[RMDB]
RNA sequence: GGGAACGACUCGAGUAGAGUCGAAAAGCAGACAUGUACUUAAUGCAGAGUACUACGGCGUCCAUUGCAUUAUGGACAAGUGUACAGCAUAGUACACGGCGUAGCAGACAUCGUAGUCUGCAUGUCAAUCAAGGCUUCAUUUCGAUGAAGCCUUGAUAAAAGAAACAACAACAACAAC
Reactivity to DMS in 0.01 (KOAc 150mM, MgCl2 10mM, bicine 150mM(pH8.5), 24C), signal-to-noise 2, nucleotides 027 to 126: g000c130a110g000a010c010a000u000g000u000a010c000u010u000a050a090u050g020c150a150g010a040g010u010a020c010u010a000c000g010g010c160g000u000c010c000a020u000u030g000c300a060u040u000a000u000g000g000a000c030a080a100g000u020g000u000a010c000a200g010c220a110u000a090g000u000a000c000a010c000g000g020c000g000u000a030g040c060a010g040a060c000a070u010c170g000u020a130g000u000c010u000g000c000a000u020g000u000c000a130
Reactivity to 2A3 in 0.01 (KOAc 150mM, MgCl2 10mM, bicine 150mM(pH8.5), 24C), signal-to-noise 4, nucleotides 027 to 126: g080c070a010g000a040c000a020u010g000u010a000c010u080u120a140a040u280g190c090a050g050a000g120u020a000c010u030a010c010g150g010c090g020u000c000c010a000u020u100g210c040a060u250u170a010u070g010g000a000c020a110a080g010u010g000u000a010c010a020g120c080a220u100a170g000u000a010c010a000c000g040g000c010g000u020a000g000c000a000g010a020c010a040u170c200g220u090a070g000u030c010u000g000c000a000u010g000u000c010a030

The record gives the reactivity of an RNA of 177 nucleotides to DMS and 2A3. In probing experiments dimethyl sulfate is read out at A N1 and C N3, which are open when not base-paired. For 2A3, 2,335 sequencing reads were counted. For DMS, 3,150 sequencing reads were counted. For DMS the reverse transcriptase was MarathonRT. The RNA was probed in 150 mM KOAc, 10 mM MgCl2 and 150 mM bicine (pH 8.5) at 24 C.